The data come from the RNA Mapping Database (RMDB), library ARCHII. This 207-nucleotide RNA was probed chemically with DMS and 2A3. For DMS, 2,032 sequencing reads were counted. For 2A3 the reverse transcriptase was SuperScript II with manganese. The reactions ran in a buffer of 150 mM KOAc, 10 mM MgCl2 and 150 mM bicine (pH 8.5), at 24 C.

RNA sequence: GGGAACGACUCGAGUAGAGUCGAAAAGAGCGGAGGAGACUGCGUGAGGCUGGUUUCACAGAGCAGCGUCCACCUCCCGCUUUCGACGGUGGAAGGAUCACGGGCCGGUGCCUUCUGAGCCCACUAUGACCUAAUAAGCUGGUUUCAACUGGACCAACAAACAAGUUACGUUCGCGUAACUUGUUUGAAAAGAAACAACAACAACAAC
Reactivity to DMS in 0.01 (KOAc 150mM, MgCl2 10mM, bicine 150mM(pH8.5), 24C), signal-to-noise 1, nucleotides 027 to 156: g050a070g030c070g010g000a300g000g030a140g020a020c040u020g070c030g000u000g040a100g010g000c000u000g020g040u000u010u050c080a160c030a100g000a130g010c040a070g000c050g000u000c000c040a200c000c010u000c060c000c050g000c070u000u000u000c010g000a110c130g000g000u000g000g010a070a110g020g000a150u020c020a030c080g040g000g020c020c100g040g020u000g020c000c040u010u010c060u010g030a120g000c010c010c030a040c070u000a080u000g000a210c020c010u000a060a140u010a000a160g000c040u020g010g000u000u000u010c060a080a080c080u010g000g040a040c030c000a050a280
Reactivity to 2A3 in 0.01 (KOAc 150mM, MgCl2 10mM, bicine 150mM(pH8.5), 24C), signal-to-noise 4, nucleotides 027 to 156: g040a010g010c000g000g020a010g030g000a030g020a060c080u200g030c060g090u070g020a070g050g040c040u070g050g060u100u180u270c100a110c040a060g040a040g040c010a010g040c010g040u060c030c040a230c040c020u000c000c030c050g000c010u060u070u060c040g070a050c040g010g060u060g030g030a040a020g010g000a060u150c010a020c070g000g060g000c030c030g020g030u070g030c010c000u050u000c020u070g040a030g010c020c030c010a030c020u070a060u170g030a030c000c000u020a080a050u100a190a040g020c090u070g000g070u010u110u190c050a080a040c050u100g030g000a070c020c000a000a080